[RMDB]
RNA sequence: GGGAACGACUCGAGUAGAGUCGAAAAGGGCAGGACGUUGGUGCGGUAGAAGUCGAUGGCGGUGAUCGGGUCGUCCUGGGGGAAAUGCAGGAAGGGGACGGCGCCGGCGUCGAGAACCGCUUGCACCCACUUUAGGUCAUUUCGAUGACCUAAAGUGAAAAGAAACAACAACAACAAC
Reactivity to DMS in 0.01 (KOAc 150mM, MgCl2 10mM, bicine 150mM(pH8.5), 24C), signal-to-noise 3, nucleotides 027 to 126: g000g000g010c050a060g010g010a070c080g000u010u010g000g010u010g000c010g000g000u020a060g010a090a160g000u010c010g000a030u010g010g000c000g000g010u010g000a130u010c030g010g000g010u000c000g010u000c000c000u010g000g000g000g000g000a090a110a130u030g010c010a050g000g000a050a030g000g010g030g010a070c030g000g010c030g000c010c030g000g000c010g010u000c020g000a020g000a090a190c020c010g000c020u000u030g010c010a080c050c030
Reactivity to 2A3 in 0.01 (KOAc 150mM, MgCl2 10mM, bicine 150mM(pH8.5), 24C), signal-to-noise 8, nucleotides 027 to 126: g030g000g020c030a020g030g030a040c040g030u050u050g020g020u020g000c010g020g000u040a050g040a190a040g110u040c020g010a030u030g060g180c010g000g010u020g020a130u100c040g020g080g260u010c020g010u000c000c000u050g040g010g010g020g070a040a120a050u240g060c020a030g030g030a060a060g080g030g010g020a000c000g010g000c000g000c000c010g040g060c000g000u020c000g000a020g020a020a010c010c000g000c000u020u160g000c020a040c000c000